[RMDB]
RNA sequence: GGGAACGACUCGAGUAGAGUCGAAAAGGUGGGAGGAUUUGACUACAAGGCCCAGUUGUCGCAGCAAGUGGAACAAAGUUUUGUGGUCACUUUUGCGGCUCGCAAGCUAACCAAAUACGGAAUAGUAGUCAUAAUAUCCCUUCGGGGAUAUUAUGACAAAAGAAACAACAACAACAAC
Reactivity to DMS in 0.01 (KOAc 150mM, MgCl2 10mM, bicine 150mM(pH8.5), 24C), signal-to-noise 4, nucleotides 027 to 126: g010g030u000g000g000g010a110g020g010a120u000u010u010g030a070c040u000a100c080a070a110g010g010c030c030c020a190g000u000u010g040u000c020g000c060a030g010c200a020a060g020u000g000g000a080a030c040a000a070a270g000u020u010u000u010g010u000g000g020u000c010a030c060u000u000u000u000g000c020g000g020c020u000c100g000c140a110a140g000c040u000a060a150c070c020a030a070a080u000a140c150g010g010a080a050u010a090g030u000a110
Reactivity to 2A3 in 0.01 (KOAc 150mM, MgCl2 10mM, bicine 150mM(pH8.5), 24C), signal-to-noise 3, nucleotides 027 to 126: g070g020u050g010g000g040a040g050g020a090u080u060u090g030a020c010u040a040c070a050a030g060g010c000c000c020a020g020u060u090g000u020c020g000c020a030g010c040a050a040g030u010g020g040a030a030c020a030a120a150g020u040u100u190u090g010u030g080g130u050c000a000c020u030u040u000u020g020c040g030g000c010u000c020g060c020a060a020g000c010u050a030a020c020c010a020a080a110u180a060c110g040g070a070a040u080a080g070u060a020

An RNA of 177 nucleotides, treated with DMS and 2A3 and read out base by base. For 2A3 the reverse transcriptase was SuperScript II with manganese. Values cover nucleotides 27 to 126.